An RNA of 177 nucleotides, treated with 2A3 and DMS and read out base by base. For 2A3, 997 sequencing reads were counted. It was measured as part of the RMDB library OK2TRN. Conditions: 150 mM KOAc, 10 mM MgCl2 and 150 mM bicine (pH 8.5), 24 C.
RNA sequence: GGGAACGACUCGAGUAGAGUCGAAAAUCUUCGUCAGAGAGUCCUGAGAUGAUCGCAGCCAGUGCUGCUGCCGCGGCUUCUCUGCCGUUUUGGGAAAGGGUUCUGGGAGCGACCGCACGGGGAGUGGUACGUGGAAUUGGUUCGCCAAUUCCACGUAAAAAGAAACAACAACAACAAC
Reactivity to 2A3 in 0.01 (KOAc 150mM, MgCl2 10mM, bicine 150mM(pH8.5), 24C), signal-to-noise 1, nucleotides 027 to 126: u020c000u070u050c040g000u000c030a000g020a020g030a000g070u000c030c000u110g060a100g010a170u110g040a050u150c070g000c010a000g050c020c020a170g140u100g140c080u080g000c000u000g100c030c020g020c020g000g000c010u250u100c050u100c030u040g000c020c000g010u050u030u130u080g050g000g040a160a120a000g040g000g000u120u030c080u060g030g000g050a090g000c060g040a100c040c050g000c000a020c020g000g000g000g050a070g030u050g020g000
Reactivity to DMS in 0.01 (KOAc 150mM, MgCl2 10mM, bicine 150mM(pH8.5), 24C), signal-to-noise 2, nucleotides 027 to 126: u000c040u010u000c030g000u000c050a030g020a040g000a080g010u000c000c020u010g020a140g010a130u000g010a070u020c100g030c010a030g010c000c110a170g020u000g020c080u000g020c020u000g000c040c070g010c180g020g000c020u010u010c010u000c080u020g000c030c040g010u000u000u000u000g010g020g000a180a090a070g000g000g010u000u000c050u000g000g000g010a220g020c080g010a050c090c070g010c070a060c100g010g010g020g010a120g030u020g010g010